[RMDB]
RNA sequence: GGGAACGACUCGAGUAGAGUCGAAAACGGACAAUCCUAAGCAUUUAGGAGCUCCAUCACCUGGUUUUAGGAUGCAAAAUGCUGACCGAACUAGGAGGUGCAGCUCCUCAGAGGGUGCACCUAUGGUUCAACUGUGCCCCUCAGGAGCACGGUUGGAAUCGGAUACCUCAUUCGUGAGGUAUCCGAUAAAAGAAACAACAACAACAAC
Reactivity to 2A3 in 0.01 (KOAc 150mM, MgCl2 10mM, bicine 150mM(pH8.5), 24C), signal-to-noise 1, nucleotides 027 to 156: c050g070g100a060c070a090a070u030c020c020u100a100a070g080c010a080u100u040u200a020g020g000a000g000c000u070c020c010a010u030c000a020c000c010u000g010g010u000u000u070u200a070g020g000a000u050g070c100a080a090a270a130u290g010c010u040g040a160c030c050g000a000a000c000u000a000g010g030a020g000g000u040g010c000a010g020c000u020c040c000u000c000a010g010a040g010g010g030u060g050c020a080c080c000u120a200u140g070g060u030u170c000a050a000c000u010g000u000g000c000c000c020c020u200c060a110g050g000a000g020c010a010c000g010g000u020u000g000g040a020
Source: RMDB library OK3TST, as collected in RNAgym.
Chemical mapping of a 207-nucleotide RNA with 2A3.
Values are in units of 0.01, from 0 to 300, in steps of 10.
2A3 is a SHAPE reagent: it acylates the 2'-hydroxyl of flexible nucleotides of all four kinds.
The RNA was probed in 150 mM KOAc, 10 mM MgCl2 and 150 mM bicine (pH 8.5) at 24 C.